About this RNA:
Chemical mapping of a 177-nucleotide RNA with 2A3 and DMS. For 2A3, 2,077 sequencing reads were counted. Conditions: 150 mM KOAc, 10 mM MgCl2 and 150 mM bicine (pH 8.5), 24 C. It was measured as part of the RMDB library RFMREP. DMS adducts were read by reverse transcription with MarathonRT. 2A3 adducts were read by reverse transcription with SuperScript II with manganese.
RNA sequence: GGGAACGACUCGAGUAGAGUCGAAAACCGAAUAGGGAUGACACGGGGCGGGCGAAAGCCUGUUCACAGCCGGUUUCCGGGCCCGUCAUCCGGGUGGGUUGCGAGAGGCGGCAUGCAAAUGCCGUCCGUGCUAUAAAUACUUCGGUAUUUAUAGCACAAAAGAAACAACAACAACAAC
Reactivity to 2A3 in 0.01 (KOAc 150mM, MgCl2 10mM, bicine 150mM(pH8.5), 24C), signal-to-noise 1, nucleotides 027 to 126: c010c020g000a020a100u180a160g040g010g020a010u020g010a020c020a020c140g000g000g040g010c010g000g010g000c020g040a040a000a010g000c010c010u010g000u010u010c040a040c010a020g050c000c000g030g000u020u090u070c020c010g030g080g020c030c020c020g050u000c020a020u010c020c020g010g030g010u110g010g050g000u090u150g030c030g000a090g010a070g060g010c000g000g020c020a000u040g000c000a050a120a040u030g000c010c000g000u000c000c000
Reactivity to DMS in 0.01 (KOAc 150mM, MgCl2 10mM, bicine 150mM(pH8.5), 24C), signal-to-noise 3, nucleotides 027 to 126: c030c030g020a110a130u010a130g020g010g010a020u000g000a050c030a160c110g000g000g000g010c000g010g020g010c010g010a110a070a140g020c010c000u000g010u000u000c040a070c100a230g000c000c020g000g000u000u000u010c020c030g010g010g000c030c020c110g000u000c000a010u000c000c010g000g000g030u010g000g000g000u000u000g000c070g000a110g010a160g010g010c000g000g020c000a010u000g000c220a080a130a020u000g020c000c010g010u000c010c040